Source information:
Chemical mapping of a 177-nucleotide RNA with 2A3. The RNA was probed in 150 mM KOAc, 10 mM MgCl2 and 150 mM bicine (pH 8.5) at 24 C. Values are in units of 0.01, from 0 to 300, in steps of 10.

RNA sequence: GGGAACGACUCGAGUAGAGUCGAAAAACGGCAGUAUACGUACUGCCGAGCUUCGAGGAGCGCUGCGACUUGCGUGGUUUGCAAGCCAGGCUCGGAGCAUUCGACAGGAACGGCGCUCACCCACUAAGUAACGAAUUCCCUUCGGGGAAUUCGUUACAAAAGAAACAACAACAACAAC
Reactivity to 2A3 in 0.01 (KOAc 150mM, MgCl2 10mM, bicine 150mM(pH8.5), 24C), signal-to-noise 3, nucleotides 027 to 126: a000c000g000g000c000a010g030u020a020u020a040c230g080u000a030c000u000g000c000c000g020a000g000c000u000u000c010g040a050g000g070a090g070c180g010c130u000g030c040g220a300c030u020u010g000c010g150u150g080g200u180u180u300g000c010a000a010g010c020c000a030g040g030c020u020c000g020g000a000g000c010a080u050u070c010g060a020c020a070g030g150a080a000c020g030g000c000g000c030u030c020a070c010c010c000a040c080u070a110a030